[RMDB]
RNA sequence: GGGAACGACUCGAGUAGAGUCGAAAAUUUACCUACGCCUGGAAAAUCUCCAAUAUCCAAUGUCAUCAAAAUAUCAUGGACAUUUUGAUAAUCAAUCACAGUCAAACCAUCAGGUUUAUUCAUACCACAACCUAGGAUAUUUCGAUAUCCUAGGUUGAAAAGAAACAACAACAACAAC
Reactivity to DMS in 0.01 (KOAc 150mM, MgCl2 10mM, bicine 150mM(pH8.5), 24C), signal-to-noise 4, nucleotides 027 to 126: u020u010u010a100c020c010u010a120c190g000c030c030u000g000g030a080a050a120a090u010c020u000c040c050a090a120u000a040u000c020c180a040a100u010g000u010c060a050u000c030a030a030a050a060u000a040u000c070a100u010g040g000a050c040a040u000u000u000u000g000a030u000a080a100u010c120a080a050u020c070a060c080a080g000u000c080a060a070a090c070c030a060u000c100a030g010g010u000u000u000a050u010u000c100a090u000a110c040c040a200
Reactivity to 2A3 in 0.01 (KOAc 150mM, MgCl2 10mM, bicine 150mM(pH8.5), 24C), signal-to-noise 4, nucleotides 027 to 126: u010u000u080a070c010c000u030a060c100g040c010c010u010g020g070a050a110a100a210u070c040u000c020c020a070a060u040a060u060c010c030a020a030u050g060u050c040a080u010c020a040a060a110a130u170a060u110c080a100u100g100g020a040c020a030u100u120u020u060g040a030u040a130a050u100c050a020a020u080c030a010c000a080g080u050c020a070a030a060c010c010a040u120c060a050g030g000u040u010u020a090u070u000c030a050u040a150c010c000a030

Structure probing data (DMS and 2A3) for a 177-nucleotide construct. The RNA was probed in 150 mM KOAc, 10 mM MgCl2 and 150 mM bicine (pH 8.5) at 24 C.